Structure probing data (DMS) for a 177-nucleotide construct. Reactivities are given for positions 27 through 126. For DMS, 1,941 sequencing reads were counted. It was measured as part of the RMDB library VIROID. The reactions ran in a buffer of 150 mM KOAc, 10 mM MgCl2 and 150 mM bicine (pH 8.5), at 24 C.

RNA sequence: GGGAACGACUCGAGUAGAGUCGAAAAUCCCCGCUGAAACAGGGAUUUUUCCCUUCCUUUCUUCGGGUGUCCUUCCCCGCCCGCAGGACCACCCCUCGCCCCCUUUGCGCUGUCGCUUCGGAUAUUAGUGCUAAUAAAGGUUCGCCUUUAUUAGCACAAAAGAAACAACAACAACAAC
Reactivity to DMS in 0.01 (KOAc 150mM, MgCl2 10mM, bicine 150mM(pH8.5), 24C), signal-to-noise 1, nucleotides 027 to 126: u010c110c000c000c020g040c060u000g010a040a060a100c130a020g020g000g010a030u010u010u000u010u000c010c000c010u000u000c020c030u010u000u000c020u000u000c020g020g020g020u000g010u010c040c060u000u000c030c020c000c060g020c030c020c010g000c120a060g000g000a060c050c040a100c060c000c000c020u000c050g030c030c010c000c050c050u000u010u010g000c060g000c070u000g000u010c050g010c050u000u000c060g000g010a170u010a110u010u020a120